Annotation
The record gives the reactivity of an RNA of 207 nucleotides to 2A3 and DMS. DMS (dimethyl sulfate) methylates the pairing face of unpaired adenines and cytosines. For DMS the reverse transcriptase was MarathonRT.
RNA sequence: GGGAACGACUCGAGUAGAGUCGAAAAAUUUUUUAAGUUUCGAUUAUCGCGGUUUAAUUGUUCAAUUUGAGAUUGCAAUAAUGUCAAUUCUGACUUAACGUUGUUUAAUCGAGAUUCGGUUAAAUUUAAUUGCUCGUUUUUAUCUCGUAACUGAGUGUCAUAAUUCAAAGUUCGCUUUGAAUUAUGAAAAAGAAACAACAACAACAAC
Reactivity to 2A3 in 0.01 (KOAc 150mM, MgCl2 10mM, bicine 150mM(pH8.5), 24C), signal-to-noise 2, nucleotides 027 to 156: a000u150u100u060u050u090u150a140a000g000u060u000u000c000g000a000u050u020a020u090c020g010c020g040g080u080u170u140a080a080u180u090g030u150u070c040a060a060u030u060u140g070a080g000a020u000u040g020c060a070a100u160a180a040u070g020u110c010a010a020u180u070c140u180g030a040c010u060u040a100a020c050g050u050u060g040u080u300u040a020a000u000c020g010a000g010a070u060u080c060g090g060u060u090a100a140a060u100u150u130a030a050u120u070g010c030u010c050g050u050u060u020u160u030a050u070c040u010c020g030u040a000a050c060u060g000a000g000u050g000
Reactivity to DMS in 0.01 (KOAc 150mM, MgCl2 10mM, bicine 150mM(pH8.5), 24C), signal-to-noise 1, nucleotides 027 to 156: a000u000u000u000u000u000u000a040a070g010u000u000u000c000g020a060u010u000a020u000c030g030c010g000g000u000u000u010a030a050u010u010g010u000u000c050a060a060u020u000u000g020a120g010a020u000u010g010c100a140a110u010a030a020u000g000u000c010a040a070u000u000c120u000g010a060c030u000u000a050a010c030g010u010u010g050u000u000u000a010a020u000c000g020a060g010a040u000u000c040g050g010u010u020a040a070a080u000u000u000a060a100u010u000g020c010u000c120g000u000u010u000u000u010a080u030c000u020c020g010u000a060a150c300u000g020a030g010u010g010
Background
The RNA was probed in 150 mM KOAc, 10 mM MgCl2 and 150 mM bicine (pH 8.5) at 24 C. The data come from the RNA Mapping Database (RMDB), library OK3TST.